[RMDB]
The data come from the RNA Mapping Database (RMDB), library RFMREP. Structure probing data (DMS and 2A3) for a 177-nucleotide construct.
RNA sequence: GGGAACGACUCGAGUAGAGUCGAAAAAGUUCCUAGGAGGCUAGAAGAGCCAACCAACAGAGAAGGGAAAGCAGUCUGUUCUGAACAUAGGGACAUAAGUUCAUUCAUGCCAAGUAUCUUUCCAGCACAAUUGUAGAACGUUCGCGUUCUACAAUUGAAAAGAAACAACAACAACAAC
Reactivity to DMS in 0.01 (KOAc 150mM, MgCl2 10mM, bicine 150mM(pH8.5), 24C), signal-to-noise 3, nucleotides 027 to 126: a170g010u000u000c000c000u010a090g010g000a300g010g000c030u010a070g050a170a100g020a090g020c030c050a050a110c060c040a060a070c090a050g010a080g020a100a100g020g000g010a050a050a040g010c060a120g000u000c030u000g000u020u000c080u020g030a090a080c110a090u000a070g010g000g010a060c090a100u010a060a070g010u000u000c070a090u000u000c060a020u010g000c100c020a040a070g010u000a050u000c040u000u000u000c010c000a160g000c190a140
Reactivity to 2A3 in 0.01 (KOAc 150mM, MgCl2 10mM, bicine 150mM(pH8.5), 24C), signal-to-noise 3, nucleotides 027 to 126: a000g030u030u000c000c000u000a070g040g050a050g040g000c020u090a040g070a230a070g030a200g060c000c000a020a100c050c000a000a060c000a060g060a030g030a150a080g060g000g030a000a040a020g020c020a020g020u030c030u040g060u110u000c030u010g030a040a020c040a080u130a090g030g000g070a000c000a060u180a080a040g020u030u040c020a020u060u040c020a010u050g000c030c010a030a020g030u000a070u080c030u020u030u010c030c010a020g050c060a030
DMS (dimethyl sulfate) methylates the pairing face of unpaired adenines and cytosines. The DMS profile rests on 2,210 reads.